[RMDB]
RNA sequence: GGGAACGACUCGAGUAGAGUCGAAAAAGCAUGCUUCGAAGGAAAAUAAAAGUCGAAUAGUGUGUACACACACAGUGUGUAAAAGAAGACGAAACUUCGAGCAUGCGAAGAGAGAAAUCUCGAAAAAGGGAAGAUAGUAGUUCGCUACUAUCUUCCCAAAAGAAACAACAACAACAAC
Reactivity to 2A3 in 0.01 (KOAc 150mM, MgCl2 10mM, bicine 150mM(pH8.5), 24C), signal-to-noise 3, nucleotides 027 to 126: a000g000c000a000u000g000c020u170u190c030g010a020a020g080g030a030a070a120a000u200a010a150a040a010g000u010c000g030a120a090u110a180g150u160g040u050g040u120a010c000a000c000a000c020a040c130a100g000u000g000u000g010u010a040a080a010a020g130a050a010g000a000c020g020a030a050a020c000u000u000c000g000a000g000c000a010u000g000c000g010a010a020g000a000g000a000g010a030a030a010u000c000u010c000g030a100a050a010a060a000
Reactivity to DMS in 0.01 (KOAc 150mM, MgCl2 10mM, bicine 150mM(pH8.5), 24C), signal-to-noise 2, nucleotides 027 to 126: a070g000c020a000u000g000c020u040u020c010g010a030a030g000g010a070a090a070a120u040a080a060a120a250g000u000c000g000a160a080u000a130g040u040g030u030g000u000a010c030a050c000a000c020a160c130a060g000u050g000u010g030u010a020a060a040a090g010a180a150g010a010c010g030a040a090a050c010u000u000c010g000a040g030c000a010u000g020c000g000a080a060g010a010g000a010g000a120a040a110u000c000u010c000g020a050a030a080a040a090
An RNA of 177 nucleotides, treated with 2A3 and DMS and read out base by base. The RNA was probed in 150 mM KOAc, 10 mM MgCl2 and 150 mM bicine (pH 8.5) at 24 C. Reactivities are given for positions 27 through 126. The 2A3 profile rests on 2,942 reads. 2A3 adducts were read by reverse transcription with SuperScript II with manganese.